Structure probing data (DMS and 2A3) for a 177-nucleotide construct. For DMS the reverse transcriptase was MarathonRT. The reactions ran in a buffer of 150 mM KOAc, 10 mM MgCl2 and 150 mM bicine (pH 8.5), at 24 C. Values cover nucleotides 27 to 126.

[RMDB]
RNA sequence: GGGAACGACUCGAGUAGAGUCGAAAAAAAAAAAAGAUAUGGACUGCACAGAGUGUGUGCGUACGUUGAAAUCGGAAACGAUGGAGUAUUUAAACACGACGAAGUGCAGUCCUAAGUCAAAAAAAAACAAUAGUUUAACGUUCGCGUUAAACUAUUGAAAAGAAACAACAACAACAAC
Reactivity to DMS in 0.01 (KOAc 150mM, MgCl2 10mM, bicine 150mM(pH8.5), 24C), signal-to-noise 1, nucleotides 027 to 126: a000a000a000a040a060a130a010a010g000a020u000a300u000g000g000a020c000u000g020c000a030c020a030g000a300g020u000g020u000g020u000g000c300g010u000a010c050g010u000u010g030a100a040a000u000c010g010g000a060a090a100c000g000a030u000g000g000a150g000u000a000u010u020u000a030a120a020c000a010c000g000a020c060g020a220a180g000u000g000c010a020g020u000c000c000u010a020a060g010u000c000a020a020a000a020a020a020a070a130a090
Reactivity to 2A3 in 0.01 (KOAc 150mM, MgCl2 10mM, bicine 150mM(pH8.5), 24C), signal-to-noise 1, nucleotides 027 to 126: a000a000a000a030a000a080a260a020g040a060u120a010u060g000g000a000c000u000g010c010a000c020a010g090a000g050u030g010u020g020u040g090c030g000u010a030c000g150u210u050g040a070a060a020u010c010g000g000a080a080a030c000g000a000u040g020g010a040g020u020a010u000u200u210a170a180a020c000a000c010g300a010c060g000a120a010g000u000g040c000a010g010u050c010c000u010a000a000g000u010c030a000a000a000a110a060a000a000a060a060